[RMDB]
RNA sequence: GGGAACGACUCGAGUAGAGUCGAAAAGAUGCUCAGCUUCUCGGCUGCAGAGCCCAUAUACACGGCAAGCUCGACAAAGUCGAAACUAUUGUAGUAUACCGUAAGUUCACCCGGCUUUGCCUCGCUAUCAGUGCAAGAGAUUCGUCUCUUGCACUGAAAAAGAAACAACAACAACAAC
Reactivity to DMS in 0.01 (KOAc 150mM, MgCl2 10mM, bicine 150mM(pH8.5), 24C), signal-to-noise 4, nucleotides 027 to 126: g000a160u010g000c060u000c050a040g020c020u000u010c110u010c180g020g000c000u000g000c090a050g000a090g000c020c020c000a100u020a100u000a100c150a090c110g010g010c080a110a090g010c080u010c030g000a050c020a040a030a050g020u010c010g040a100a060a060c030u000a080u010u000g000u000a050g040u000a090u000a040c050c110g010u000a050a070g010u000u010c070a120c220c140c040g000g000c030u000u000u000g000c000c030u010c120g020c050u000a100
Reactivity to 2A3 in 0.01 (KOAc 150mM, MgCl2 10mM, bicine 150mM(pH8.5), 24C), signal-to-noise 3, nucleotides 027 to 126: g050a030u100g000c020u030c060a010g000c030u210u070c070u090c160g050g020c030u040g000c050a010g030a030g080c000c000c010a050u100a010u010a060c100a000c060g040g010c060a060a030g030c030u030c060g030a020c050a050a120a020g010u050c010g000a050a030a020c010u030a050u070u140g040u070a110g130u030a070u070a160c020c010g030u040a160a050g000u060u100c050a120c030c070c010g000g020c020u050u060u030g000c000c020u010c010g040c020u050a070
This 177-nucleotide RNA was probed chemically with DMS and 2A3. For DMS the reverse transcriptase was MarathonRT. The data come from the RNA Mapping Database (RMDB), library OK2TST. Conditions: 150 mM KOAc, 10 mM MgCl2 and 150 mM bicine (pH 8.5), 24 C. Values are in units of 0.01, from 0 to 300, in steps of 10. For DMS, 3,033 sequencing reads were counted.